[RMDB]
RNA sequence: GGGAACGACUCGAGUAGAGUCGAAAAUCUACACAGCCUCCAUCACCGAUGGCGCCUGCAGGUGGGCCAUGUUCUUCCUCUUCUCAGCGCUGCAGGUGGGCCUGGCCGGCUGGACAUUUGCUGGGCCCACUGGGGGCGAUUUCGAUCGCCCCCAGUGAAAAGAAACAACAACAACAAC
Reactivity to DMS in 0.01 (KOAc 150mM, MgCl2 10mM, bicine 150mM(pH8.5), 24C), signal-to-noise 1, nucleotides 027 to 126: u000c040u000a080c090a200c050a040g020c020c020u000c050c040a050u000c030a130c110c080g000a060u000g000g000c080g030c060c030u000g020c090a040g010g020u010g010g020g020c070c030a110u010g000u000u000c050u000u000c040c020u000c090u000u010c000u000c050a110g010c070g020c020u000g000c080a070g020g020u000g000g020g020c010c020u000g010g030c020c150g010g020c030u030g010g010a070c150a120u000u000u010g010c020u000g000g010g000c020c020
Source information: The record gives the reactivity of an RNA of 177 nucleotides to DMS. For DMS, 1,371 sequencing reads were counted. It was measured as part of the RMDB library OK2TRN. For DMS the reverse transcriptase was MarathonRT. Values cover nucleotides 27 to 126.